[RMDB]
RNA sequence: GGGAACGACUCGAGUAGAGUCGAAAACAUCUUUCCUCCCUACACUGUGACUCCAGCUUGGGAGGGGCAGGGCUAGGCUGAGCCAGCACUCCCUGUGGUGUCUGCCUGCCACGUGCAGCUCUGGAGUAAAACCUGGAGAAGUUCGCUUCUCCAGGAAGUAUGUUAUUUGGUUCGCCAAAUAACAUACAAAAGAAACAACAACAACAAC
Reactivity to 2A3 in 0.01 (KOAc 150mM, MgCl2 10mM, bicine 150mM(pH8.5), 24C), signal-to-noise 2, nucleotides 027 to 156: c020a080u100c100u080u150u070c000c010u020c000c000c000u110a100c130a080c170u120g070u110g140a030c000u010c020c000a020g010c040u070u060g010g010g010a010g000g000g010g000c000a020g000g000g040c050u280a030g000g030c010u030g030a030g130c070c030a020g060c020a030c040u080c010c010c020u020g030u030g020g030u040g100u010c020u030g020c010c010u010g030c000c000a160c150g120u160g020c030a030g010c030u030c020u060g000g000a010g000u020a010a030a000a010c000c000u000g000g000a010g020a000a000g000u030u090c130g030c130u000u000c000u000c000c000a000g000g000a000a000
Reactivity to DMS in 0.01 (KOAc 150mM, MgCl2 10mM, bicine 150mM(pH8.5), 24C), signal-to-noise 1, nucleotides 027 to 156: c000a120u000c110u000u010u000c050c040u010c000c010c000u000a170c200a080c110u030g000u000g020a110c020u000c160c010a070g020c090u030u000g020g040g010a060g000g000g000g050c070a050g020g010g000c030u000a060g030g010c030u010g010a250g000c000c030a100g040c030a050c010u020c030c030c040u000g000u000g030g050u000g010u020c050u010g000c080c020u010g040c050c030a060c080g000u000g040c030a090g000c050u000c030u000g030g010a120g020u010a030a070a120a170c000c000u000g030g000a020g000a040a020g020u000u010c280g020c000u000u000c000u010c000c000a020g010g000a000a030